[RMDB]
RNA sequence: GGGAACGACUCGAGUAGAGUCGAAAACUCAGCCAAGCUGUUGUUUUAAAAGAGCAAUAAAAAUGAAUUAUGACUAAACGCCUUCUAACUUAAUGCUUUCGGACGGGGAUCCCCGGCAAAUAACGUAAUCGUCUAGCUAUUUCGAUAGCUAGACGAUAAAAGAAACAACAACAACAAC
Reactivity to 2A3 in 0.01 (KOAc 150mM, MgCl2 10mM, bicine 150mM(pH8.5), 24C), signal-to-noise 2, nucleotides 027 to 126: c000u020c050a000g040c080c020a040a100g000c000u040g010u090u030g050u010u000u040u040a100a090a010a000g060a000g000c040a020a010u110a210a130a040a050a030u150g100a090a070u170u090a030u130g030a010c010u100a050a080a050c020g000c000c000u020u020c020u050a100a200c040u040u070a190a050u120g020c000u030u100u100c120g040g020a010c010g020g000g000g070a050u040c020c000c000c000g000g000c030a020a090a170u080a070a030c010g060u010a040
Reactivity to DMS in 0.01 (KOAc 150mM, MgCl2 10mM, bicine 150mM(pH8.5), 24C), signal-to-noise 1, nucleotides 027 to 126: c070u020c000a250g010c130c130a040a130g000c010u000g040u000u000g020u000u000u000u000a050a040a110a050g000a090g020c060a040a060u000a000a080a070a150a150u020g020a050a050u000u020a020u000g000a060c060u000a120a120a030c140g000c070c000u010u020c100u000a000a070c070u010u000a070a050u000g000c020u000u030u000c030g010g000a080c020g030g010g080g000a110u040c080c000c010c020g010g040c180a010a120a020u020a010a100c200g010u070a050

Conditions: 150 mM KOAc, 10 mM MgCl2 and 150 mM bicine (pH 8.5), 24 C. The record gives the reactivity of an RNA of 177 nucleotides to 2A3 and DMS. 2A3 adducts were read by reverse transcription with SuperScript II with manganese. The DMS profile rests on 1,140 reads. Values are in units of 0.01, from 0 to 300, in steps of 10.